The data come from the RNA Mapping Database (RMDB), library OK2TRN. Chemical mapping of a 177-nucleotide RNA with 2A3 and DMS. For 2A3, 1,315 sequencing reads were counted. DMS adducts were read by reverse transcription with MarathonRT. The DMS profile rests on 1,560 reads. Values cover nucleotides 27 to 126. Conditions: 150 mM KOAc, 10 mM MgCl2 and 150 mM bicine (pH 8.5), 24 C.

[RMDB]
RNA sequence: GGGAACGACUCGAGUAGAGUCGAAAAUUAUAAAAUUAAAUGGCGGUCUCGACGGGAAUCGAACCCGCGAUCUCCUGCGUGACAGGCAGGCGUGUUAACCGCUACACUACGAGACCAUUAGUAAAACCAAUGAAAGAUUCUUCGGAAUCUUUCAUUGAAAAGAAACAACAACAACAAC
Reactivity to 2A3 in 0.01 (KOAc 150mM, MgCl2 10mM, bicine 150mM(pH8.5), 24C), signal-to-noise 2, nucleotides 027 to 126: u130u070a130u170a300a020a000a100u130u250a080a160a300u120g070g030c020g010g000u000c010u000c020g050a080c040g000g000g060a000a130u100c060g000a070a070c000c000c000g010c000g010a000u000c010u020c060c000u000g010c020g030u080g040a070c050a070g030g140c000a010g040g000c060g000u260g040u120u200a040a090c030c070g020c000u030a030c000a020c030u160a040c040g030a010g020a030c010c030a020u020u150a030g050u030a000a040a090a140c020
Reactivity to DMS in 0.01 (KOAc 150mM, MgCl2 10mM, bicine 150mM(pH8.5), 24C), signal-to-noise 2, nucleotides 027 to 126: u010u000a180u000a100a070a050a170u010u000a070a060a150u010g000g040c100g000g010u000c030u000c010g020a230c070g020g000g010a070a070u010c090g000a120a140c020c000c000g000c020g020a010u000c080u000c000c010u000g010c050g000u000g010a100c170a100g010g010c040a030g010g000c090g000u010g000u000u020a100a050c140c000g010c010u000a050c070a030c050u000a140c070g000a030g020a040c020c000a070u010u000a080g010u000a040a090a060a200c270